Notes: Structure probing data (DMS) for a 177-nucleotide construct. Source: RMDB library OK2TRN, as collected in RNAgym. The DMS profile rests on 658 reads.
[RMDB]
RNA sequence: GGGAACGACUCGAGUAGAGUCGAAAAAGGUUUUGAGAGGGGGUACAGCUCAGCCAUCGCCAUCGUGAAUCAGCUCAAGGUGACCGAGCCCUCUCAAGUCUGCAAACCAUCUGUGAGGGCAGCAGCAUCUCACUUACCCCUUCGGGGGUAAGUGAGAAAAAGAAACAACAACAACAAC
Reactivity to DMS in 0.01 (KOAc 150mM, MgCl2 10mM, bicine 150mM(pH8.5), 24C), signal-to-noise 1, nucleotides 027 to 126: a130g000g010u000u000u000u060g000a010g000a040g000g000g000g020g010u010a150c220a070g010c020u020c080a030g020c040c000a100u000c010g010c080c050a020u010c050g010u020g020a100a080u030c080a070g000c130u000c030a070a130g000g000u000g000a040c100c040g000a090g010c000c000c000u000c000u000c030a000a000g000u000c030u000g030c140a040a140a140c070c010a070u030c090u000g020u000g030a060g000g000g010c060a200g010c080a010g010c230a090

Record summary: The reactions ran in a buffer of 150 mM KOAc, 10 mM MgCl2 and 150 mM bicine (pH 8.5), at 24 C. DMS adducts were read by reverse transcription with MarathonRT.